[RMDB]
RNA sequence: GGGAACGACUCGAGUAGAGUCGAAAAGAGUCCCCCACCAUCCCUUCCGGAUGAAACUGGUCCCGAUAGGGGCACCCACAAUAGGAUGGCAAAAGGGGACCAUCGGGUCCGUCGUUCCAUCCUUUUCAAGCUUCUACGUUCGCGUAGAAGAAAAGAAACAACAACAACAAC
Reactivity to DMS in 0.01 (KOAc 150mM, MgCl2 10mM, bicine 150mM(pH8.5), 24C), signal-to-noise 9, nucleotides 027 to 129: g030a130g000u010c010c030c010c040c030a090c120c020a080u000c000c030c070u050u060c120c120g010g010a060u040g020a040a100a060c060u000g020g020u000c020c020c020g040a100u020a170g030g010g010g020c000a030c000c010c010a100c180a070a080u010a000g020g030a050u010g010g030c130a040a040a130a130g030g020g020g010a040c000c020a110u070c170g050g030g040u020c000c000g040u020c030g000u020u020c020c020a000u010c000c000u010u020u010u030c030a100a100g020
Reactivity to 2A3 in 0.01 (KOAc 150mM, MgCl2 10mM, bicine 150mM(pH8.5), 24C), signal-to-noise 9, nucleotides 027 to 129: g080a040g070u040c000c000c000c000c000a020c010c010a040u030c000c000c000u190u140c060c040g050g010a060u060g040a090a020a020c090u130g030g010u030c010c000c010g070a110u190a250g020g000g000g000c010a050c010c010c000a050c030a040a060u070a100g040g010a030u030g010g030c060a020a030a050a080g020g000g000g010a010c010c000a100u120c050g110g010g020u000c010c020g070u040c030g030u040u000c010c000a040u090c020c060u050u040u040u070c070a080a040g020

Chemical mapping of a 170-nucleotide RNA with DMS and 2A3.
For 2A3, 68,899 sequencing reads were counted.
For 2A3 the reverse transcriptase was SuperScript II with manganese.
For DMS, 50,486 sequencing reads were counted.
The RNA was probed in 150 mM KOAc, 10 mM MgCl2 and 150 mM bicine (pH 8.5) at 24 C.